An RNA of 177 nucleotides, treated with DMS and 2A3 and read out base by base. 2A3 adducts were read by reverse transcription with SuperScript II with manganese. For DMS the reverse transcriptase was MarathonRT. The DMS profile rests on 1,668 reads. The 2A3 profile rests on 1,591 reads.
[RMDB]
RNA sequence: GGGAACGACUCGAGUAGAGUCGAAAAAUGAGACAGAGUACUUUGAAAGAAUCAGUCUGCAGGCACAUCAAUGUGGAGUGAUUGAAGGGAAUAAGAGACUGCUUUUCUUAUCAUUUACAUCAUUAGGCCAUGGCAUAUCGUUCGCGAUAUGCCAUGGAAAAGAAACAACAACAACAAC
Reactivity to DMS in 0.01 (KOAc 150mM, MgCl2 10mM, bicine 150mM(pH8.5), 24C), signal-to-noise 2, nucleotides 027 to 126: a060u020g010a080g000a080c130a080g010a110g010u000a080c080u030u000u000g020a060a070a120g000a050a040u000c030a000g000u000c020u000g020c070a080g010g000c080a070c120a060u000c060a020a050u010g000u010g010g020a080g000u000g000a040u000u000g030a030a170g000g000g020a080a050u010a080a070g000a060g010a060c090u010g000c170u010u000u000u000c010u020u000a080u000c030a030u020u010u000a020c060a070u000c060a030u010u000a070g030g020
Reactivity to 2A3 in 0.01 (KOAc 150mM, MgCl2 10mM, bicine 150mM(pH8.5), 24C), signal-to-noise 3, nucleotides 027 to 126: a000u090g010a030g050a040c100a110g110a020g070u020a080c100u100u140u130g040a060a050a050g020a020a050u020c000a010g100u000c020u010g010c070a090g090g000c070a040c000a100u090c050a080a090u090g080u050g090g070a090g020u060g050a040u070u070g050a070a020g140g050g010a060a050u130a120a030g050a020g000a070c040u030g060c000u080u020u040u070c010u030u120a170u080c000a020u020u070u070a070c040a070u130c000a030u030u120a050g130g000